[RMDB]
RNA sequence: GGGAACGACUCGAGUAGAGUCGAAAAACGAGUCGUACGCGACUCGAAUGGUAUUGUCGGCGUAAAAGAUCAAGACGUCACCGGACGCGACCGGGCUAAAAAGCGAAACGUCAUCUACGGAUGACGAAAAACGGACCUGGGUUCGCCCAGGUCCGAAUCGUUGAGACUAGUUCGCUAGUCUCAACGAAAAAGAAACAACAACAACAAC
Reactivity to 2A3 in 0.01 (KOAc 150mM, MgCl2 10mM, bicine 150mM(pH8.5), 24C), signal-to-noise 2, nucleotides 027 to 156: a000c000g000a000g010u000c020g010u010a060c270g010c000g120a000c030u010c000g010a020a070u050g050g030u240a140u150u110g110u090c040g010g010c010g030u080a020a100a090a080g080a120u100c090a070a040g090a030c000g000u040c030a020c050c000g030g000a020c000g000c000g050a020c000c010g000g000g010c000u020a000a000a000a070a030g010c000g000a070a000a070c010g000u000c000a000u000c000u000a030c090g080g040a000u000g000a000c010g020a100a000a000a000a020c010g000g000a030c000c000u020g020g020g020u040u080c210g080c000c000c000a000g000g030u000c000c000g000a000a000
This 207-nucleotide RNA was probed chemically with 2A3. For 2A3 the reverse transcriptase was SuperScript II with manganese. The reactions ran in a buffer of 150 mM KOAc, 10 mM MgCl2 and 150 mM bicine (pH 8.5), at 24 C. Reactivities are rounded to 0.1 and cut off at 0 and 3.